[RMDB]
RNA sequence: GGGAACGACUCGAGUAGAGUCGAAAAACAGUACAAGCUGCUACGGCAGCUGGUACUGAACUUUCAUGGAGUUAAGAAACCACGUAAACAAAGCGGAACCGAAAAGCUAAACGAGUAGGAAGAAUAAAUAGGUACCACCACUUCGGUGGUGGUACAAGGGUUCAGGUAAGUUCGCUUACCUGAACCCAAAAGAAACAACAACAACAAC
Reactivity to 2A3 in 0.01 (KOAc 150mM, MgCl2 10mM, bicine 150mM(pH8.5), 24C), signal-to-noise 1, nucleotides 027 to 156: a010c000a000g010u000a000c040a000a000g000c000u000g000c000u000a010c210g160g000c000a000g000c040u000g020g000u000a000c000u000g000a000a030c010u000u130u190c060a080u170g060g080a050g070u140u180a070a020g070a150a040a000c000c000a030c030g050u140a070a100a090c030a000a120a090g010c000g000g050a000a090c020c000g000a000a000a000a000g000c020u100a240a000a000c030g010a000g000u000a040g110g070a070a000g040a020a080u280a210a060a000u220a090g070g000u000a000c000c000a000c020c000a020c020u150u070c280g030g010u000g000g000u000g000g020u000a000c000a000a010

Source information: An RNA of 207 nucleotides, treated with 2A3 and read out base by base. The 2A3 profile rests on 470 reads. Reactivities are given for positions 27 through 156. Conditions: 150 mM KOAc, 10 mM MgCl2 and 150 mM bicine (pH 8.5), 24 C.